[RMDB]
RNA sequence: GGGAACGACUCGAGUAGAGUCGAAAAAAGAUUUAUUUUUGCACAUUGAUAAAAUGAUGUUUUCACUGGGUAGACUAACUAAAAAACACCUAUUUUCUACUAAGAGAAAAUAGGUGUUUUUAUUUACCUUAAUGAUCCAUUUCGAUGGAUCAUUAAGAAAAGAAACAACAACAACAAC
Reactivity to DMS in 0.01 (KOAc 150mM, MgCl2 10mM, bicine 150mM(pH8.5), 24C), signal-to-noise 4, nucleotides 027 to 126: a030a070g010a180u020u010u020a060u010u000u000u000u010g000c010a030c010a020u020u000g000a140u040a080a070a020a030u000g000a090u010g020u000u000u000u000c020a060c100u010g010g000g010u000a030g010a080c180u010a070a090c160u020a000a020a010a010a010a000c000a000c000c000u000a000u010u000u000u000c000u000a120c180u030a120a150g010a040g000a010a000a000a000u000a000g000g010u000g000u000u000u000u000u000a040u010u020u010a050c080
Reactivity to 2A3 in 0.01 (KOAc 150mM, MgCl2 10mM, bicine 150mM(pH8.5), 24C), signal-to-noise 2, nucleotides 027 to 126: a000a010g120a000u110u240u080a130u020u000u070u010u060g020c010a030c000a020u100u030g070a070u280a190a060a010a000u070g250a170u060g040u030u120u010u060c040a050c010u020g000g180g000u080a040g070a020c050u070a120a050c010u120a040a120a030a030a030a030c000a000c000c000u000a010u000u010u000u000c000u070a150c040u090a160a020g030a000g000a200a000a000a000u000a000g000g010u000g000u000u000u000u000u000a010u000u000u040a010c000

Source: RMDB libraries RFM100 and RFMREP, as collected in RNAgym. Chemical mapping of a 177-nucleotide RNA with DMS and 2A3. Reactivities are given for positions 27 through 126. DMS adducts were read by reverse transcription with MarathonRT.